[RMDB]
RNA sequence: GGGAACGACUCGAGUAGAGUCGAAAAACGAUUCGCAGUUAAUCCUGGCCUGUUAGAAACAUCAGAAGGCUGUAGACAAAUACUGGGACAGCUACAACCAUCCCUUCAGACAGGAUCAGAAGAACUUAGAUCAUUAUAUAAUACAGUAGCAACCCUCGUUUGCUACCAUGUUCGCAUGGUAGCAAACAAAAGAAACAACAACAACAAC
Reactivity to 2A3 in 0.01 (KOAc 150mM, MgCl2 10mM, bicine 150mM(pH8.5), 24C), signal-to-noise 1, nucleotides 027 to 156: a000c050g110a090u170u140c100g060c100a050g020u010u060a060a000u090c000c000u020g010g020c000c000u000g000u020u050a100g050a100a160a040c080a070u150c040a050g130a200a020g030g000c010u000g000u030a050g050a140c050a040a180a070u180a100c090u100g000g000g180a060c110a070g000c040u010a000c020a080a000c000c010a080u080c010c000c000u010u030c030a020g010a080c000a000g000g110a280u100c020a020g050a120a030g020a010a010c050u070u060a040g020a030u000c000a050u070u110a060u050a050u010a260a080u180a150c050a050g160u150a060g040c010a000a080c000c000c030u030c030